RNA sequence: GGGAACGACUCGAGUAGAGUCGAAAACACGCUUUCGAGCGUGCAAUACCCGUAGGGAUCCUAAGGAGCGGUCGACUAUAGGCUUCGAAAGAGGCCUACGAAUCGACCGAACUACUCCGAUGGAUCCCUAAACGGCGACCGUCUCGUUCGCGAGAAAAAUCUAAGGACCAUUCGUGGUCCUUAGAUUAAAAGAAACAACAACAACAAC
Reactivity to DMS in 0.01 (KOAc 150mM, MgCl2 10mM, bicine 150mM(pH8.5), 24C), signal-to-noise 1, nucleotides 027 to 156: c000a010c000g040c000u000u000u020c220g000a040g010c010g000u010g000c000a080a160u020a080c060c000c000g040u000a060g030g010g000a000u000c010c010u030a280a300g020g020a060g020c010g000g010u000c010g010a020c000u020a130u020a040g010g010c000u000u000c020g000a210a160a260g020a040g000g060c000c000u000a000c050g020a050a030u000c010g010a020c000c000g000a010a060c020u010a190c020u000c000c020g000a300u000g020g000a030u000c000c010c010u000a000a020a060c040g000g020c010g000a110c060c030g030u000c050u000c030g000u000u000c070g000c000g000a050g000a030a170a050